[RMDB]
RNA sequence: GGGAACGACUCGAGUAGAGUCGAAAAAUGACAGACCUUGGAAAGAAGAGAAUAUACUUAGCCAAGCCUAAAACUAAAUGAGGUGGAGUGAUUCAGAAAUCAAUACCUGACACUUCCCAGUGAAGCCGGUGGAUAGAAGCUAGUAUAGUAUGAUGGCUCCAACAAAUACUUUCGAGUAUUUGUUGGAAAAAGAAACAACAACAACAAC
Reactivity to 2A3 in 0.01 (KOAc 150mM, MgCl2 10mM, bicine 150mM(pH8.5), 24C), signal-to-noise 3, nucleotides 027 to 156: a000u080g000a030c050a040g110a070c000c030u100u130g000g060a210a140a010g020a040a020g010a020g050a150a010u080a050u050a140c050u090u080a020g000c000c020a040a010g000c000c020u170a170a140a020a070c030u050a020a040a200u130g040a100g000g020u170g030g000a030g000u030g030a100u150u040c000a000g060a060a050a050u100c040a050a050u120a160c010c000u000g000a000c000a000c000u020u050c040c000c000a020g020u000g100a050a040g010c040c030g030g060u050g010g040a030u040a150g150a050a010g020c030u010a000g040u070a050u070a130g040u050a080u200g070a070u120g070g030c030
Reactivity to DMS in 0.01 (KOAc 150mM, MgCl2 10mM, bicine 150mM(pH8.5), 24C), signal-to-noise 2, nucleotides 027 to 156: a100u000g000a130c070a080g020a130c030c030u000u010g000g000a150a100a100g000a090a120g010a140g000a080a100u000a090u010a050c030u010u010a060g040c010c010a080a160g000c020c000u000a090a050a120a120c050u000a040a060a090u010g000a040g010g000u010g010g000a030g040u020g000a180u000u010c020a060g000a100a070a120u020c120a050a120u020a120c110c030u000g010a110c010a060c030u010u000c000c000c000a130g030u000g000a070a060g050c020c060g020g000u000g000g000a080u000a120g000a060a090g010c000u010a050g000u000a040u000a050g010u000a030u010g010a080u000g010g000c100